[RMDB]
RNA sequence: GGGAACGACUCGAGUAGAGUCGAAAAGCCGACUGCACGUGCGUGCGAGCAGUUUUCGAAAUCGCACGUUUCACGUAAAGACCCUACUCUACUCGAUGCGAGGGUCAGCAAGCAAGCAGCAAUAAAAGACAAAGUUUAGUUUCGACUAAACUUUGUCAAAAGAAACAACAACAACAAC
Reactivity to DMS in 0.01 (KOAc 150mM, MgCl2 10mM, bicine 150mM(pH8.5), 24C), signal-to-noise 4, nucleotides 027 to 126: g040c040c060g030a140c050u000g010c090a070c010g020u000g010c010g020u000g020c010g000a040g020c170a150g000u010u000u000u010c130g010a060a140a110u020c010g000c010a020c000g000u010u010u010c030a000c020g020u000a060a120a110g000a060c020c030c000u000a040c020u000c020u000a040c050u000c030g010a040u000g010c050g000a100g000g000g000u000c010a070g000c080a060a060g010c040a070a070g030c050a050g000c060a070a070u010a070a080a100a090
Reactivity to 2A3 in 0.01 (KOAc 150mM, MgCl2 10mM, bicine 150mM(pH8.5), 24C), signal-to-noise 3, nucleotides 027 to 126: g080c030c030g070a060c050u070g000c020a010c010g010u020g000c000g000u000g010c010g010a070g060c090a060g030u060u070u120u270c080g090a110a050a070u000c000g000c010a000c000g010u010u060u040c020a020c010g000u020a000a040a080g010a020c010c000c010u010a010c000u020c000u050a090c040u020c080g030a040u110g010c030g020a040g000g000g000u000c000a010g000c020a070a040g010c000a050a000g020c010a010g000c020a030a140u100a180a160a020a020